[RMDB]
This 177-nucleotide RNA was probed chemically with DMS and 2A3. 2A3 adducts were read by reverse transcription with SuperScript II with manganese.
RNA sequence: GGGAACGACUCGAGUAGAGUCGAAAAGAAAGAAAGAAAGAAGGGCUGUUGAGUGCGAGGGACCCCGAGGGAGGGCAGGCUGCCCCAGGCCCUGCCCCCUCCAGGAAGCCUUCUUGCUCCAGCCCAACAUCACCGUUAGAUUCGUCUAACGGUGAUGAAAAGAAACAACAACAACAAC
Reactivity to DMS in 0.01 (KOAc 150mM, MgCl2 10mM, bicine 150mM(pH8.5), 24C), signal-to-noise 3, nucleotides 027 to 126: g010a070a110a100g030a140a080a030g000a110a110a100g030a210a170g010g010g010c000u000g000u040u030g020a020g060u010g000c230g000a020g010g000g000a090c050c020c030c300g000a120g000g010g010a070g000g000g040c010a030g000g020c050u020g000c030c000c050c090a220g000g020c130c010c030u000g020c000c000c000c000c000u000c010c060a120g000g010a100a140g000c000c000u000u010c000u010u020g000c000u000c000c010a010g000c000c000c000a000a010
Reactivity to 2A3 in 0.01 (KOAc 150mM, MgCl2 10mM, bicine 150mM(pH8.5), 24C), signal-to-noise 5, nucleotides 027 to 126: g090a020a050a010g120a030a070a020g120a030a080a020g140a060a130g020g000g000c020u030g030u250u230g010a010g000u030g020c010g000a010g020g010g010a040c010c020c000c010g020a110g000g030g000a110g000g030g000c000a000g020g010c040u120g030c020c010c030c000a020g020g010c030c020c000u000g000c020c000c000c000c000u000c010c010a010g000g010a040a050g010c000c000u010u010c000u010u050g000c010u000c010c000a000g000c000c000c000a000a000